[RMDB]
The record gives the reactivity of an RNA of 177 nucleotides to 2A3. The 2A3 profile rests on 294 reads. The reactions ran in a buffer of 150 mM KOAc, 10 mM MgCl2 and 150 mM bicine (pH 8.5), at 24 C. It was measured as part of the RMDB library OK1LIB. For 2A3 the reverse transcriptase was SuperScript II with manganese.

RNA sequence: GGGAACGACUCGAGUAGAGUCGAAAACUUGAAGAUACUGUUUUUGAUAAAGUUAAGAAUUUUUUAUCGUCAUCAUAUUUUUUAAUUCUAUUUGUAGGUUACUUAUCUCAACGUAAUUAUAUUGACAUGCGUUAAGAGAAUUCGUUCUCUUAACGCAAAAAGAAACAACAACAACAAC
Reactivity to 2A3 in 0.01 (KOAc 150mM, MgCl2 10mM, bicine 150mM(pH8.5), 24C), signal-to-noise 2, nucleotides 027 to 126: c000u020u080g020a040a000g030a020u110a180c100u070g070u210u040u230u080u040g060a050u030a030a140a020g020u110u050a220a150g050a090a160u070u110u070u010u020u200a100u290c020g060u020c030a020u240c000a050u060a060u160u300u110u010u000u070a040a040u100u000c000u130a190u040u300u050g000u070a060g130g080u150u000a050c060u150u000a030u000c130u020c130a000a060c130g000u000a000a020u110u160a110u020a270u200u190g000a000c080a080